[RMDB]
Chemical mapping of a 177-nucleotide RNA with DMS and 2A3.
Values cover nucleotides 27 to 126.
Source: RMDB library OK2TST, as collected in RNAgym.

RNA sequence: GGGAACGACUCGAGUAGAGUCGAAAAGUAGGCCGUGAGGCGCUCGAUCAGUUGCAGGAAGUCUUCCAGGGUGCUCGGCUUGGUCAGGUACGAGUUGGCUUGCAGGGCGUAAGCCCGUUUGACAUCGACGACGACUAUAAUUCGUUAUAGUCGUCGUAAAAGAAACAACAACAACAAC
Reactivity to DMS in 0.01 (KOAc 150mM, MgCl2 10mM, bicine 150mM(pH8.5), 24C), signal-to-noise 6, nucleotides 027 to 126: g010u010a090g020g020c010c020g020u020g020a160g020g010c040g010c030u000c060g000a080u010c050a090g010u010u010g020c070a070g010g000a070a100g010u010c050u000u010c040c040a120g010g000g010u000g010c040u000c040g000g010c040u010u010g010g000u010c030a040g010g020u000a060c080g010a090g010u000u000g000g000c020u000u000g010c070a130g010g010g010c020g000u010a080a150g000c000c000c010g000u000u000u000g000a090c100a110u010c120g010
Reactivity to 2A3 in 0.01 (KOAc 150mM, MgCl2 10mM, bicine 150mM(pH8.5), 24C), signal-to-noise 2, nucleotides 027 to 126: g080u090a050g080g000c040c040g060u070g050a040g040g010c040g000c040u030c020g030a080u070c020a050g100u140u100g050c030a010g000g110a130a040g050u020c040u030u030c020c020a020g060g030g020u060g020c040u020c040g020g020c000u000u020g040g030u020c030a040g040g000u060a030c020g020a000g040u050u040g050g000c010u010u040g000c050a090g020g000g000c010g020u050a060a000g020c000c000c020g010u010u010u050g020a020c020a060u100c040g020